[RMDB]
RNA sequence: GGGAACGACUCGAGUAGAGUCGAAAAACGAGUCCGGACGCGGACUCGAAGGGCCCCAGAAGACCAAGGGGCCCAAACCUACCACUCAUUAGAUGCAUGGAAAUCACUAGGUGAUACGUCACCUAGAACACGCUUUUAAGCUUCGGCUUAAAAGCAAGACUCUUUUGAAGUUCGCUUCAAAAGAGUCAAAAGAAACAACAACAACAAC
Reactivity to 2A3 in 0.01 (KOAc 150mM, MgCl2 10mM, bicine 150mM(pH8.5), 24C), signal-to-noise 2, nucleotides 027 to 156: a000c000g000a000g020u010c010c020g060g060a050c080g030c050g160g000a000c010u000c000g000a000a010g000g000g010c000c000c000c000a070g140a300a020g050a050c050c070a140a070g000g000g000g070c020c010c010a000a000a000c000c000u020a030c020c030a040c010u140c020a050u050u200a040g040a140u090g080c060a060u060g030g070a020a060a130u190c010a040c090u000a000g060g030u020g000a010u040a100c240g110u010c010a000c050c000u000a010g000a020a000c040a000c100g000c000u030u000u000u040a000a010g000c000u000u070c160g050g000c010u000u040a000a000a000a000g000c000a000a000